[RMDB]
RNA sequence: GGGAACGACUCGAGUAGAGUCGAAAAUUGCGACCCUUGUCUCAACCUAUGUGAUAAUCUUACAAGCCACUAAAUUUACUUUGUGGAACUACUUGUUUGAGACUAUUCCCACACAGUUGUUCCCACUCACACCCACUGUUCGCAGUGGGUAAAAGAAACAACAACAACAAC
Reactivity to 2A3 in 0.01 (KOAc 150mM, MgCl2 10mM, bicine 150mM(pH8.5), 24C), signal-to-noise 9, nucleotides 027 to 129: u150u090g040c020g050a060c040c010c000u010u080g050u000c010u000c010a040a050c010c010u100a090u140g050u010g060a100u060a230a060u060c020u030u050a040c030a040a000g040c000c000a020c040u210a050a040a130u270u300u170a160c140u080u040u070g000u000g010g010a030a060c030u110a020c010u170u020g020u030u020u030g010a010g000a020c010u020a070u050u040c020c010c000a040c000a010c010a030g010u000u010g000u000u010c000c020c000a020c040u070c010a040c000
Reactivity to DMS in 0.01 (KOAc 150mM, MgCl2 10mM, bicine 150mM(pH8.5), 24C), signal-to-noise 5, nucleotides 027 to 129: u060u060g000c080g000a000c060c050c120u000u100g020u040c020u010c030a040a100c060c080u030a100u050g060u040g040a060u040a140a110u050c000u040u010a060c060a010a000g050c050c000a020c020u070a020a060a200u080u110u100a130c220u030u050u040g030u020g020g010a030a030c030u040a180c010u060u020g030u040u010u040g030a000g030a040c000u000a160u000u060c000c040c020a100c130a080c160a050g060u020u060g080u020u070c010c010c020a120c000u050c110a100c230